[RMDB]
The record gives the reactivity of an RNA of 177 nucleotides to 2A3.
RNA sequence: GGGAACGACUCGAGUAGAGUCGAAAAAUACGCCAUGGCGCUUCAAGAUGGACCUGUUGACGUUUCACGUGCCUUGACAAAACUUCGAAACGAUCAGGGUGAAAUAAAUGAAAUUCUAGCAGACCGGGACGUGCUACCCAUUCGUGGGUAGCACGUCAAAAGAAACAACAACAACAAC
Reactivity to 2A3 in 0.01 (KOAc 150mM, MgCl2 10mM, bicine 150mM(pH8.5), 24C), signal-to-noise 1, nucleotides 027 to 126: a000u080a060c040g000c010c000a130u130g010g000c040g000c000u040u170c030a030a080g000a070u170g050g050a140c000c000u000g000u100u000g060a030c040g000u110u000u000c070a040c000g040u080g000c060c000u050u010g050a000c020a010a270a040a070c030u300u170c040g180a040a050a050c240g070a060u040c040a010g110g140g050u070g000a050a070a070u130a100a060a030u100g040a190a000a000u000u190c100u070a010g030c060a000g000a020c000c000g000g130
Overview: The reactions ran in a buffer of 150 mM KOAc, 10 mM MgCl2 and 150 mM bicine (pH 8.5), at 24 C.